[RMDB]
This 170-nucleotide RNA was probed chemically with 2A3 and DMS. DMS adducts were read by reverse transcription with MarathonRT. 2A3 adducts were read by reverse transcription with SuperScript II with manganese. The RNA was probed in 150 mM KOAc, 10 mM MgCl2 and 150 mM bicine (pH 8.5) at 24 C.
RNA sequence: GGGAACGACUCGAGUAGAGUCGAAAAUGAUUACACCCUUGCCAAUACUACAACAGAACCACUCAAACUUUUUGCUGCUGAGACUUUACGUGCCACUGAAGAGGCGUCUAAGCAGUCUUAUGCUAUUACCCAAACGCCUUCGGGCGUUUGAAAAGAAACAACAACAACAAC
Reactivity to 2A3 in 0.01 (KOAc 150mM, MgCl2 10mM, bicine 150mM(pH8.5), 24C), signal-to-noise 3, nucleotides 027 to 129: u100g020a050u160u130a040c030a130c020c010c000u030u070g020c000c000a050a030u060a040c010u000a000c000a050a000c040a060g010a050a000c010c010a050c040u000c030a100a130a070c040u050u060u020u010u060g010c000u020g020c040u010g000a000g010a010c020u060u050u040a050c080g030u030g060c000c000a030c070u070g080a060a090g050a010g040g010c020g000u040c000u000a000a000g000c010a020g040u000c000u000u020a030u040g030c000u000a030u180u060a050c000c000
Reactivity to DMS in 0.01 (KOAc 150mM, MgCl2 10mM, bicine 150mM(pH8.5), 24C), signal-to-noise 6, nucleotides 027 to 129: u040g010a090u020u050a090c260a150c040c020c050u040u060g030c080c030a120a040u030a110c090u000a030c040a070a070c000a050g030a130a070c060c000a030c020u070c030a040a050a050c170u020u050u000u020u040g010c050u060g020c060u030g000a000g010a050c050u050u050u000a060c180g030u060g030c020c060a170c070u000g040a210a070g060a080g060g000c020g010u020c000u040a100a060g030c110a020g000u020c000u050u000a030u050g030c090u020a120u000u000a070c050c010